[RMDB]
RNA sequence: GGGAACGACUCGAGUAGAGUCGAAAAGCGUACUACACGAGGUCACCAGAAGCAACAGCUAUUAACUCGAAUUCCCAAAUAGGAAUUCGAUGUAAUAGACAUGCUUCUGCAAGUCCUCGUGUAUCGCAAAAUCUCGUUCUGUUCGCAGAACGAGAAAGAUCCUGGACAGGUUCGCCUGUCCAGGAUCAAAAGAAACAACAACAACAAC
Reactivity to 2A3 in 0.01 (KOAc 150mM, MgCl2 10mM, bicine 150mM(pH8.5), 24C), signal-to-noise 1, nucleotides 027 to 156: g000c000g030u080a070c030u000a000c000a020c000g010a010g070g000u080c040a070c120c040a030g030a040a000g000c020a000a170c000a140g020c000u000a000u050u060a090a070c000u000c000g000a000a000u010u010c120c020c060a220a260a110u300a140g000g000a040a000u010u010c000g030a060u160g010u020a000a000u000a000g070a070c020a040u050g020c000u000u020c000u000g010c000a040a280g010u020c000c000u000c000g010u000g000u000a000u020c000g000c010a000a000a000a190u030c000u000c000g000u020u010c010u020g050u040u070c300g010c140a000g000a000a000c000g000a010g000a000a000a010